[RMDB]
Structure probing data (2A3) for a 207-nucleotide construct.
It was measured as part of the RMDB library M2RFPK.
Conditions: 150 mM KOAc, 10 mM MgCl2 and 150 mM bicine (pH 8.5), 24 C.
Reactivities are given for positions 27 through 156.
RNA sequence: GGGAACGACUCGAGUAGAGUCGAAAAGAGAUGGCGAGAGCCAUCGGUAGUAUAGCGAAAAUCAUAAAUGAGAAGAGCUCUAAACGCCUAAGUAGAGUUAAAAUAAUUAGACAGGGACUACUACAAACACGGCCUCGAACGUUCGCGUUCGAGGCAAGGUACUUCCCUUGUUCGCAAGGGAAGUACCAAAAGAAACAACAACAACAAC
Reactivity to 2A3 in 0.01 (KOAc 150mM, MgCl2 10mM, bicine 150mM(pH8.5), 24C), signal-to-noise 1, nucleotides 027 to 156: g060a000g010a000u020g000g000c010g000a140g000a000g030c000c000a000u010c000g030g000u030a000g000u010a030u090a020g100c050g030a000a050a000a000u010c060a060u070a210a190a160u150g020a060g040a100a000g000a000g030c000u000c000u000a170a240a070c130g030c010c010u030a130a040g040u030a000g020a000g020u040u100a000a000a050a000u210a020a120u210u040a040g030a080c050a030g030g010g070a030c040u060a010c010u060a030c130a040a180a000c090a000c170g170g000c070c000u000c000g000a000a030c000g000u000u080c220g030c000g110u000u000c000g000a000g000g000c000a000a000